About this RNA:
The record gives the reactivity of an RNA of 177 nucleotides to 2A3 and DMS. The data come from the RNA Mapping Database (RMDB), library TTRDES. Reactivities are given for positions 27 through 126. The DMS profile rests on 3,072 reads. Values are in units of 0.01, from 0 to 300, in steps of 10. The reactions ran in a buffer of 150 mM KOAc, 10 mM MgCl2 and 150 mM bicine (pH 8.5), at 24 C.
[RMDB]
RNA sequence: GGGAACGACUCGAGUAGAGUCGAAAAGAUAUGGAGAUCCAGUAGGGAGAAUGGCGGUCGGAAACGACCGAACAUUCGAGGAUCUACGGAUCUCCUAAGUCAAAAGGGUAAUCUUCGGAUUACCCAAGGUUAAUUUUAUGUUCGCAUAAAAUUAACCAAAAGAAACAACAACAACAAC
Reactivity to 2A3 in 0.01 (KOAc 150mM, MgCl2 10mM, bicine 150mM(pH8.5), 24C), signal-to-noise 2, nucleotides 027 to 126: g010a010u040a020u090g010g000a010g000a000u020c020c050a120g020u020a010g060g050g020a300g010a170a010u020g000g040c000g000g000u020c000g000g000a020a050a030c000g010a010c010c000g010a030a030c000a000u000u020c000g010a050g000g040a030u000c010u000a000c000g000g000a010u030c010u000c010c000u000a010a000g030u030c030a000a000a080a280g000g020g000u010a000a000u000c030u050u130c300g110g010a020u000u010a010c000c020c010a000a000
Reactivity to DMS in 0.01 (KOAc 150mM, MgCl2 10mM, bicine 150mM(pH8.5), 24C), signal-to-noise 2, nucleotides 027 to 126: g000a020u000a300u020g000g010a010g000a010u000c000c000a140g040u000a010g000g000g010a090g010a000a000u000g000g000c010g030g010u000c000g010g010a090a090a160c000g020a010c000c000g000a050a070c000a000u000u000c000g010a090g020g000a060u010c000u000a010c000g000g010a000u000c000u000c000c000u000a000a060g000u010c040a080a100a120a130g010g010g000u000a010a000u000c000u000u010c250g060g000a010u000u000a010c000c000c000a000a010